[RMDB]
Chemical mapping of a 207-nucleotide RNA with DMS and 2A3. DMS adducts were read by reverse transcription with MarathonRT. 2A3 adducts were read by reverse transcription with SuperScript II with manganese. The reactions ran in a buffer of 150 mM KOAc, 10 mM MgCl2 and 150 mM bicine (pH 8.5), at 24 C.
RNA sequence: GGGAACGACUCGAGUAGAGUCGAAAACUCAAGGUAUGGGCACUAUAGGAGAUGUCAGGCCUGGGCAUGUUCUUGGCUUCACUGAAUGACAGGAUUCAUUUUCUAAUUGGUCACCCUUUGUCUAAAGAAGAUCAAGAACUACUUCACUUCUGUUAAAUAUUAUCACCAGUUUCGACUGGUGAUAAUAAAAAGAAACAACAACAACAAC
Reactivity to DMS in 0.01 (KOAc 150mM, MgCl2 10mM, bicine 150mM(pH8.5), 24C), signal-to-noise 2, nucleotides 027 to 156: c030u000c060a100a060g010g040u000a050u010g000g010g030c040a050c060u000a170u000a140g010g020a110g010a130u010g030u000c000a080g020g000c070c020u010g010g020g010c030a070u010g030u000u000c020u000u000g020g060c040u000u000c020a120c110u000g020a100a120u000g010a060c000a050g010g000a110u000u000c060a060u020u000u000u010c090u040a130a210u010u000g010g030u000c030a100c040c000c010u000u010u000g000u000c060u010a080a100a130g000a070a040g000a100u000c030a010a040g010a060a060c050u000a020c040u000u000c040a060c120u010u000c070u010g000u000u000a050a080a180
Reactivity to 2A3 in 0.01 (KOAc 150mM, MgCl2 10mM, bicine 150mM(pH8.5), 24C), signal-to-noise 3, nucleotides 027 to 156: c000u010c020a030a030g030g000u070a030u100g020g000g000c030a030c070u080a050u150a300g110g040a080g030a080u030g030u040c040a040g070g030c010c030u000g000g010g010c060a040u060g020u020u000c000u020u020g000g000c000u000u020c010a050c110u130g100a080a120u120g030a000c010a020g010g020a030u130u050c010a020u040u110u090u020c050u120a170a150u120u080g050g000u070c010a090c000c020c000u060u120u160g020u000c000u010a040a070a000g000a020a000g010a100u090c010a000a030g020a020a000c000u040a050c000u060u150c040a060c090u080u050c060u090g050u070u050a070a060a060